[RMDB]
RNA sequence: GGGAACGACUCGAGUAGAGUCGAAAACUAGCUUUCGCUGCCUAAUAAGCAGUAGCAUAGCUGAUCCUCCGUGCAUCGCCCAUGUGCUACGGUAAGGGUCUCACUCUAAGUGGGCUACACUAGUUAAUCUCCGUCUGAGGUUAAAUAGAAGAGCUUAGACCCUAUUUUUGUUCGCAAAAAUAGGGUCAAAAGAAACAACAACAACAAC
Reactivity to 2A3 in 0.01 (KOAc 150mM, MgCl2 10mM, bicine 150mM(pH8.5), 24C), signal-to-noise 4, nucleotides 027 to 156: c020u020a010g010c000u030u010u020c020g010c000u000g000c000c000u140a170a050u250a230a010g000c010a000g020u060a060g030c040a040u010a000g000c010u020g010a050u010c000c010u010c010c010g000u000g000c000a000u020c030g020c000c000c000a000u010g000u000g020c040u110a020c000g020g030u050a060a110g000g010g030u020c030u040c050a130c050u130c050u090a060a030g010u000g010g000g000c000u010a010c030a000c030u010a020g030u010u010a010a010u010c000u010c070c140g300u120c230u260g010a000g000g000u000u000a010a000a010u030a020g180a260a000g010a030g080c030u040u040a010
Reactivity to DMS in 0.01 (KOAc 150mM, MgCl2 10mM, bicine 150mM(pH8.5), 24C), signal-to-noise 1, nucleotides 027 to 156: c030u000a030g010c010u000u000u000c020g010c010u000g000c010c000u000a240a120u000a170a050g000c000a020g030u020a080g080c090a050u000a030g020c020u000g020a030u000c020c010u000c000c030g010u000g000c030a020u000c080g000c070c040c040a080u000g010u020g020c030u010a060c000g000g020u010a070a020g020g000g020u000c010u000c070a040c120u000c160u010a100a070g100u000g010g030g000c000u000a220c100a170c020u000a000g000u000u010a030a030u000c000u010c000c150g030u000c170u000g020a000g030g060u000u000a010a040a040u000a040g000a160a070g020a200g030c000u000u000a250